[RMDB]
RNA sequence: GGGAACGACUCGAGUAGAGUCGAAAAAUGAGAUCCCAUCUUGCACACUGUGCUAAUUUUAGAUUCUCAUGCCUCCUACUUGGAGAGAUCUGGACUAGAAGUCAGGGCAUCUGACUCUGCCAGCCACAAAACGUACAAGGCUUCGGCCUUGUACGAACAUAGUAUCUUAGUUCGCUAAGAUACUAUGAAAAGAAACAACAACAACAAC
Reactivity to 2A3 in 0.01 (KOAc 150mM, MgCl2 10mM, bicine 150mM(pH8.5), 24C), signal-to-noise 9, nucleotides 027 to 156: a000u040g000a010g000a040u020c010c030c010a040u050c060u040u070g000c000a030c030a090c160u280g010u010g010c030u060a060a160u030u080u070u110a090g020a110u210u030c020u010c020a020u080g050c010c010u000c010c010u100a260c130u130u240g010g000a030g000a010g010a070u030c000u020g010g020a080c050u090a090g020a130a020g070u000c000a010g030g090g150c090a150u130c070u000g000a000c000u000c000u000g000c010c000a020g040c040c010a080c030a030a140a110a020c010g000u000a000c000a000a000g000g000c000u030u110c160g070g000c000c000u000u000g000u000a000c000g000a000a000
Reactivity to DMS in 0.01 (KOAc 150mM, MgCl2 10mM, bicine 150mM(pH8.5), 24C), signal-to-noise 3, nucleotides 027 to 156: a100u000g000a080g000a100u000c020c020c040a190u000c120u000u010g030c010a050c010a140c090u000g010u000g020c010u010a030a050u000u000u000u000a060g010a100u000u000c010u000c020a050u010g010c060c000u000c020c010u000a110c180u000u000g010g000a090g020a130g010a080u000c010u000g000g010a050c000u000a050g010a070a090g010u000c020a030g010g010g010c140a110u000c030u000g000a040c010u000c040u000g010c030c030a080g000c050c020a120c060a050a040a070a160c010g000u000a010c000a030a020g010g020c000u000u000c300g060g000c000c010u000u000g010u000a000c000g000a020a080
Structure probing data (2A3 and DMS) for a 207-nucleotide construct. Reactivities are given for positions 27 through 156. For 2A3, 12,641 sequencing reads were counted. It was measured as part of the RMDB library M2RFPK. 2A3 adducts were read by reverse transcription with SuperScript II with manganese. The reactions ran in a buffer of 150 mM KOAc, 10 mM MgCl2 and 150 mM bicine (pH 8.5), at 24 C.